Conditions: 150 mM KOAc, 10 mM MgCl2 and 150 mM bicine (pH 8.5), 24 C. This 177-nucleotide RNA was probed chemically with 2A3 and DMS. For DMS the reverse transcriptase was MarathonRT. Source: RMDB libraries RFM100 and RFMREP, as collected in RNAgym.
[RMDB]
RNA sequence: GGGAACGACUCGAGUAGAGUCGAAAAGAAGCGAUUUACGCAAAUCCGGCUACCGCAAUCGGGAAAAGAUGCUUGUGCCGUUUUCGUCAGCCACUCGCAGAGCAGAGCAAAUUAAGCUAACAGCCGAAAGGUGUGGUAUAUUCGUAUACCACACCUUAAAAGAAACAACAACAACAAC
Reactivity to 2A3 in 0.01 (KOAc 150mM, MgCl2 10mM, bicine 150mM(pH8.5), 24C), signal-to-noise 5, nucleotides 027 to 126: g120a060a000g020c030g040a070u060u110u210a060c020g030c040a000a040a070u040c030c000g000g020c010u070a040c000c040g000c080a090a160u110c020g010g030g080a020a120a020a020g070a030u090g030c030u090u070g050u060g070c030c010g010u010u000u030u040c020g010u020c040a050g040c040c020a010c020u030c020g010c000a010g000a010g050c010a010g020a010g060c030a030a110a110u140u080a150a000g000c020u020a050a070c010a060g020c010c020g040a060
Reactivity to DMS in 0.01 (KOAc 150mM, MgCl2 10mM, bicine 150mM(pH8.5), 24C), signal-to-noise 5, nucleotides 027 to 126: g010a160a100g020c030g020a170u030u010u020a070c040g030c050a050a110a100u010c050c010g010g010c030u000a040c050c130g020c130a120a100u010c040g000g010g000a080a050a100a100g020a070u010g020c050u020u000g010u010g000c000c040g000u000u000u020u020c060g030u010c090a070g000c020c040a060c050u010c040g000c040a050g020a110g000c010a050g000a070g010c080a030a100a090u010u020a070a060g000c020u010a030a090c130a060g010c020c020g000a090